The record gives the reactivity of an RNA of 207 nucleotides to DMS and 2A3. Reactivities are given for positions 27 through 156. DMS adducts were read by reverse transcription with MarathonRT. The data come from the RNA Mapping Database (RMDB), library OK3TST. The reactions ran in a buffer of 150 mM KOAc, 10 mM MgCl2 and 150 mM bicine (pH 8.5), at 24 C.
RNA sequence: GGGAACGACUCGAGUAGAGUCGAAAAGAUACUGUCUUCUUGUGAGGAAGAACUGAGUUUCUCAUUUGAGUCUACAGCAUGCUUUAUAAAAACAAUAUACUGAGAUGAUUCGUAAUGAUUCAUAAUGUGAAUUAAUUUAGGAGAAGCAAAAAACAACCAAUGUGAGACGUUUCGACGUCUCACAUUGAAAAGAAACAACAACAACAAC
Reactivity to DMS in 0.01 (KOAc 150mM, MgCl2 10mM, bicine 150mM(pH8.5), 24C), signal-to-noise 2, nucleotides 027 to 156: g010a090u000a110c020u010g040u000c150u000u000c010u000u010g000u010g010a040g000g010a060a080g020a140a300c090u010g010a080g030u000u010u000c010u010c000a150u010u000u000g000a120g030u000c030u000a080c030a040g020c020a040u000g000c050u010u020u000a180u010a080a120a050a100a080c090a080a110u010a150u010a080c060u010g000a090g020a140u000g000a170u000u010c030g010u000a070a080u000g000a010u000u000c010a080u010a110a050u000g030u010g000a040a010u010u000a060a130u030u000u000a110g000g000a080g010a060a040g000c090a000a000a010a120a030a060c070a090a120c110
Reactivity to 2A3 in 0.01 (KOAc 150mM, MgCl2 10mM, bicine 150mM(pH8.5), 24C), signal-to-noise 4, nucleotides 027 to 156: g020a010u160a050c040u070g030u030c020u050u030c000u070u130g100u100g060a050g030g000a010a020g030a090a060c100u120g030a060g090u020u040u010c020u000c010a030u040u030u060g050a020g030u000c010u050a040c010a010g010c020a040u100g050c010u080u160u050a120u140a070a110a030a030a020c050a090a030u130a000u040a180c020u070g020a030g040a160u090g020a040u050u030c050g030u110a110a040u120g050a030u000u010c040a010u060a300a090u150g010u000g070a030a010u060u060a080a050u080u070u120a060g000g050a070g030a050a010g030c030a020a020a060a090a000a000c060a000a010c060